The record gives the reactivity of an RNA of 177 nucleotides to DMS. The reactions ran in a buffer of 150 mM KOAc, 10 mM MgCl2 and 150 mM bicine (pH 8.5), at 24 C.

[RMDB]
RNA sequence: GGGAACGACUCGAGUAGAGUCGAAAAGGAGAAAGCGUUCGCCAUCCGCCUCUUCUCCCGCAAGGAGAUCCAGCUCCUGCAGAUGGCCAAUGAGAAAGCCCUGAAGCAGAAGGGCAUCACCGUGAAGCCUAACCCUCCGGUUCGCCGGAGGGUUAGGAAAAGAAACAACAACAACAAC
Reactivity to DMS in 0.01 (KOAc 150mM, MgCl2 10mM, bicine 150mM(pH8.5), 24C), signal-to-noise 1, nucleotides 027 to 126: g000g070a020g080a020a120a240g020c000g000u000u000c300g000c000c020a000u000c010c090g080c000c050u000c000u000u000c060u000c000c000c010g020c210a070a130g000g000a000g030a220u010c080c220a060g000c000u000c020c000u000g080c200a050g050a010u000g020g000c030c200a060a100u050g000a020g000a110a040a220g000c000c000c010u000g030a160a120g040c140a120g000a210a000g000g010g030c000a050u000c130a060c070c020g000u000g020a050a250g000